Conditions: 150 mM KOAc, 10 mM MgCl2 and 150 mM bicine (pH 8.5), 24 C. The record gives the reactivity of an RNA of 177 nucleotides to 2A3 and DMS. For 2A3, 2,448 sequencing reads were counted. The data come from the RNA Mapping Database (RMDB), library TTRDES. For 2A3 the reverse transcriptase was SuperScript II with manganese.

RNA sequence: GGGAACGACUCGAGUAGAGUCGAAAAGAUAUGGAAUGAGAGGGAGCCCGAAGAACAGCUUCGGAAACGAAGCUGGGAGGGUCUCUACCAUUCCUAAGUCAAAUCGGUGCUCUUCGGAGCACCGAAAGUAAGUGCUUAGGUUCGCCUAAGCACUUACAAAAGAAACAACAACAACAAC
Reactivity to 2A3 in 0.01 (KOAc 150mM, MgCl2 10mM, bicine 150mM(pH8.5), 24C), signal-to-noise 1, nucleotides 027 to 126: g000a020u050a020u140g000g010a050a030u110g060a150g020a050g210g070g010a150g300c060c000c010g110a250a060g000a000a010c000a000g010c000u000u000c010g020g020a030a060a040c000g010a010a000g000c000u000g010g000g000a000g000g010g030u020c010u010c000u000a080c050c010a000u010u000c000c000u020a130a030g060u070c030a020a030a190u050c030g000g000u000g000c000u020c000u070u140c300g130g000a010g000c000a000c000c000g010a010a000a000
Reactivity to DMS in 0.01 (KOAc 150mM, MgCl2 10mM, bicine 150mM(pH8.5), 24C), signal-to-noise 1, nucleotides 027 to 126: g000a040u000a300u020g000g010a020a000u010g010a080g000a050g020g000g010a090g000c010c010c010g000a060a130g000a160a220c000a000g030c000u000u000c000g010g000a060a120a230c000g040a010a020g020c000u010g020g000g000a100g010g000g050u000c000u000c000u010a050c060c010a000u000u000c000c000u010a070a090g040u000c070a060a150a150u000c010g030g000u000g000c010u010c010u000u010c160g000g000a040g030c010a000c000c000g000a000a000a040